[RMDB]
RNA sequence: GGGAACGACUCGAGUAGAGUCGAAAACUAAGGGAAUGAUUUUGAUAGUGCUAUGAAGGACCAGUUAGAAAGUGCAGCAGAAUUUCAGGUAAGGGAUCAUAGGAUCCUAAAAUAAAUAGGAGGAAACAAGAAAGGAAAAGUAGGGGAAAUUUUGAAAAUCAUUUACCUGAUUCGUCAGGUAAAUGAUAAAAGAAACAACAACAACAAC
Reactivity to 2A3 in 0.01 (KOAc 150mM, MgCl2 10mM, bicine 150mM(pH8.5), 24C), signal-to-noise 2, nucleotides 027 to 156: c010u030a010a040g030g000g020a050a100u060g040a090u070u050u100u090g110a100u130a120g010u040g060c020u050a030u140g040a060a020g020g000a040c040c000a030g010u070u040a030g060a050a100a000g040u030g050c020a030g000c050a000g060a130a090u070u130u090c020a020g010g000u030a050a030g050g000g000a000u000c000a040u120a170g140g040a030u020c000c000u020a040a030a000a010u100a020a050a020u060a020g000g000a000g020g040a000a070a090c030a010a010g130a110a030a030g010g000a050a120a050a000g030u050a010g060g010g010g050a020a050a050u150u200u100u180g050a060a040a070
Reactivity to DMS in 0.01 (KOAc 150mM, MgCl2 10mM, bicine 150mM(pH8.5), 24C), signal-to-noise 1, nucleotides 027 to 156: c060u030a070a130g000g020g010a130a120u000g000a110u000u000u000u000g000a090u000a050g000u000g020c050u000a070u000g010a120a080g000g020a040c010c010a070g000u000u000a100g020a080a110a080g000u000g030c070a070g020c090a050g000a080a070u000u000u000c050a040g010g020u010a070a180g000g020g030a010u000c030a120u010a180g020g010a060u010c000c010u000a010a040a040a090u000a040a070a100u000a070g010g000a070g010g000a100a080a080c050a070a110g010a070a090a110g000g000a060a030a080a100g070u000a000g010g070g040g010a060a030a160u000u000u000u000g000a030a040a090